[RMDB]
RNA sequence: GGGAACGACUCGAGUAGAGUCGAAAAGACCGUCAACGAGUUCGCCGCGACGGCUGCCGACAAGCUGGGACUGUCCGGCAGCGCUUACCAGCAAAUGGCAUCGGUGAUCGGUUCACAGCUCAAAAACUCAAUACGGGUAGUUCGCUACCCGUAUUGAAAAAGAAACAACAACAACAAC
Reactivity to DMS in 0.01 (KOAc 150mM, MgCl2 10mM, bicine 150mM(pH8.5), 24C), signal-to-noise 3, nucleotides 027 to 126: g000a040c010c010g010u000c010a020a020c010g000a010g010u010u000c200g010c000c000g020c130g000a130c240g010g010c010u010g010c010c010g040a070c030a060a100g000c040u010g010g020g010a150c140u000g000u000c070c070g010g000c010a030g020c030g020c090u010u000a100c170c110a160g000c060a050a100a120u000g000g010c040a090u000c010g000g010u010g000a020u010c030g020g000u010u010c070a110c200a140g000c050u030c050a060a050a070a110a130c140
Reactivity to 2A3 in 0.01 (KOAc 150mM, MgCl2 10mM, bicine 150mM(pH8.5), 24C), signal-to-noise 3, nucleotides 027 to 126: g030a000c010c000g020u010c000a030a020c020g020a050g150u140u090c080g060c000c010g020c030g040a080c060g080g000c010u000g000c010c000g020a010c090a140a060g040c100u250g120g050g150a140c040u020g020u100c090c100g060g010c000a000g010c050g000c030u020u100a080c010c040a030g030c040a050a080a230u250g030g000c010a020u010c020g000g030u000g000a070u190c070g030g010u080u080c090a100c030a080g040c000u030c060a060a100a020a020a020c030